[RMDB]
RNA sequence: GGGAACGACUCGAGUAGAGUCGAAAAUCAGGUGGCCGAAAGCCACCACGUAAACUAGUGAACCGUGCUGCGUAGCGUAGGGGUCUGCUACCUCGUUGGAGGUGGAGAUUGUAGCCUUCGUGUGGGCCGUUAUAGGUUUCUUCGGAAACCUAUAACGAAAAGAAACAACAACAACAAC
Reactivity to DMS in 0.01 (KOAc 150mM, MgCl2 10mM, bicine 150mM(pH8.5), 24C), signal-to-noise 3, nucleotides 027 to 126: u010c090a160g020g050u000g020g020c000c020g020a080a140a300g000c000c000a000c000c000a010c170g020u010a080a100a110c130u000a060g030u000g000a120a130c040c020g030u000g000c050u000g010c060g000u000a090g000c030g010u000a060g000g000g010g000u000c020u030g010c010u000a010c010c010u000c020g010u000u020g010g010a020g000g010u000g000g000a050g000a030u000u010g030u010a140g020c000c000u000u000c100g010u000g020u020g010g000g010c070
Reactivity to 2A3 in 0.01 (KOAc 150mM, MgCl2 10mM, bicine 150mM(pH8.5), 24C), signal-to-noise 1, nucleotides 027 to 126: u100c040a090g020g000u010g000g000c020c050g280a080a010a020g010c000c010a000c000c010a000c010g060u070a000a090a080c050u060a070g090u020g190a040a050c000c020g060u070g060c050u050g000c050g080u070a010g000c020g020u020a020g020g000g030g000u000c040u090g140c010u020a020c010c000u000c020g150u210u250g300g010a000g000g010u000g010g010a010g000a020u010u100g120u180a060g050c010c030u020u070c030g030u080g090u170g030g050g000c010
The record gives the reactivity of an RNA of 177 nucleotides to DMS and 2A3.
The DMS profile rests on 2,450 reads.
The RNA was probed in 150 mM KOAc, 10 mM MgCl2 and 150 mM bicine (pH 8.5) at 24 C.
DMS adducts were read by reverse transcription with MarathonRT.
The data come from the RNA Mapping Database (RMDB), library VIROID.
For 2A3, 1,966 sequencing reads were counted.
As a SHAPE reagent, 2A3 marks flexible, mostly unpaired nucleotides at the ribose 2'-OH.